[RMDB]
RNA sequence: GGGAACGACUCGAGUAGAGUCGAAAAAUGCCUUCAUGAAGGAUAAAAAAGGGAAAAUUAACAAGCAAGAUACUUCUCUUCACCAAUAUGCUUCUCUUGUCGACACAGAGUAUGAACCAUUUGUGAAAUAAUGCUGGGAUUUCGAUCCCAGCAUUAUAAAAGAAACAACAACAACAAC
Reactivity to DMS in 0.01 (KOAc 150mM, MgCl2 10mM, bicine 150mM(pH8.5), 24C), signal-to-noise 1, nucleotides 027 to 126: a040u000g020c030c010u020u020c080a090u020g000a100a020g000g000a080u000a000a080a080a080a030a140g050g000g000a050a030a060a120u010u010a110a060c080a020a050g040c100a090a030g010a080u020a010c120u000u000c080u000c000u010u000c070a070c100c080a000a150u020a090u000g000c100u000u000c000u000c040u000u000g000u020c020g020a120c070a090c020a100g000a040g030u020a020u000g000a030a130c050c010a100u000u030u000g020u000g000a090a090